[RMDB]
An RNA of 177 nucleotides, treated with 2A3 and DMS and read out base by base. The data come from the RNA Mapping Database (RMDB), library OK2TRN. In probing experiments dimethyl sulfate is read out at A N1 and C N3, which are open when not base-paired. The reactions ran in a buffer of 150 mM KOAc, 10 mM MgCl2 and 150 mM bicine (pH 8.5), at 24 C.
RNA sequence: GGGAACGACUCGAGUAGAGUCGAAAACGCUUGGUCUGCCAUCGCAUGCGCGUCCUAUGUCGGAGCUCGAAGACCUCACUACUUUUGAAGAAGACAUAGCUGAGGAGGCUGCUACUAACACACCAGCACCUUAUGUUGAUUUCGAUCAACAUAAGGUAAAAGAAACAACAACAACAAC
Reactivity to 2A3 in 0.01 (KOAc 150mM, MgCl2 10mM, bicine 150mM(pH8.5), 24C), signal-to-noise 9, nucleotides 027 to 126: c040g020c030u040u110g030g020u040c030u050g040c020c020a080u070c050g010c050a040u150g030c040g000c020g110u030c010c010u070a080u070g040u030c030g040g040a050g080c020u020c030g040a070a050g050a140c010c030u040c040a060c060u160a060c010u050u080u120u300g120a120a080g040a040a010g020a020c020a050u060a010g030c090u060g030a020g030g030a020g060g000c010u020g010c010u010a060c020u040a090a010c040a010c010a030c060c020a020g030c030
Reactivity to DMS in 0.01 (KOAc 150mM, MgCl2 10mM, bicine 150mM(pH8.5), 24C), signal-to-noise 9, nucleotides 027 to 126: c100g010c040u000u000g020g010u000c050u000g010c040c040a080u000c100g010c050a070u010g010c070g020c050g010u010c040c020u000a040u000g010u000c050g000g010a190g010c080u000c040g000a070a070g000a110c080c030u000c080a070c080u000a080c060u000u000u000u000g010a090a070g000a220a100g000a070c090a070u000a040g010c120u010g000a070g010g010a130g000g010c020u000g010c040u000a040c060u010a070a130c100a050c110a090c080c030a080g000c120